[RMDB]
RNA sequence: GGGAACGACUCGAGUAGAGUCGAAAAGAUGAGAAUACGUGACUUGGUCAGAGGCGGAAAGACACAAGCACGAACGAUUCAGUAGAGUAUCGAGCCGCCAACAGAUGCACGUUGUGAUCGUGCUAGACGUCGAUAUCAGGUUCGCCUGAUAUCGACGAAAAGAAACAACAACAACAAC
Reactivity to 2A3 in 0.01 (KOAc 150mM, MgCl2 10mM, bicine 150mM(pH8.5), 24C), signal-to-noise 2, nucleotides 027 to 126: g080a030u250g050a020g050a220a030u130a060c000g010u020g070a150c010u000u020g000g000u020c010a000g060a070g030g020c040g060g040a250a100a000g030a000c050a000c000a190a000g020c000a010c050g030a120a020c020g000a000u010u040c030a000g050u060a010g110a000g110u060a090u170c020g020a030g040c000c000g030c010c020a020a020c050a000g030a070u110g000c000a000c030g000u050u190g100u190g080a160u150c000g000u020g000c000u000a020g020a080
Reactivity to DMS in 0.01 (KOAc 150mM, MgCl2 10mM, bicine 150mM(pH8.5), 24C), signal-to-noise 1, nucleotides 027 to 126: g000a120u090g000a130g000a140a070u070a100c020g050u010g000a150c000u000u000g000g000u020c000a120g000a230g000g010c020g000g000a190a050a080g000a000c000a080c000a020a000g000c070a050c000g000a110a030c040g000a020u050u000c100a090g000u020a140g040a090g000u000a150u010c050g020a070g050c000c050g030c000c000a190a070c120a040g000a070u020g000c000a000c030g010u000u000g070u020g010a080u010c040g000u000g040c010u000a050g020a270
The record gives the reactivity of an RNA of 177 nucleotides to 2A3 and DMS. Conditions: 150 mM KOAc, 10 mM MgCl2 and 150 mM bicine (pH 8.5), 24 C. Source: RMDB library OK1LIB, as collected in RNAgym. For DMS, 1,346 sequencing reads were counted.